[RMDB]
RNA sequence: GGGAACGACUCGAGUAGAGUCGAAAACAAGUUAGGGGCUCAACUUUAGUGGGCUACGCUGUCUAGUCUCCGCCUGAGGCUAGCUGAAGAAGACAAUCAGGCUGACCUGUGAGAAAGCCGGUUACGGGGCGGGCUUACAGGUGACAUUAAAACCGUGCGGUUGCAUAAAGUUCGCUUUAUGCAACCGAAAAGAAACAACAACAACAAC
Reactivity to 2A3 in 0.01 (KOAc 150mM, MgCl2 10mM, bicine 150mM(pH8.5), 24C), signal-to-noise 3, nucleotides 027 to 156: c030a040a060g180u230u200a090g080g040g050g010c010u030c070a090a060c030u250u160u120a180g050u140g010g020g010c010u040a050c030g000c000u040g050u230c010u010a000g000u000c000u020c030c040g020c000c000u000g000a000g000g000c000u000a000g000c000u040g010a030a030g040a010a000g110a020c120a040a070u050c000a010g000g000c000u000g000a000c000c000u000g000u010g010a000g000a030a080a000g010c020c010g000g020u020u160a000c000g000g030g010g000c000g000g050g000c000u000u000a000c010a000g010g020u000g000a000c000a010u130u170a000a020a000a010c000c000g010u010g000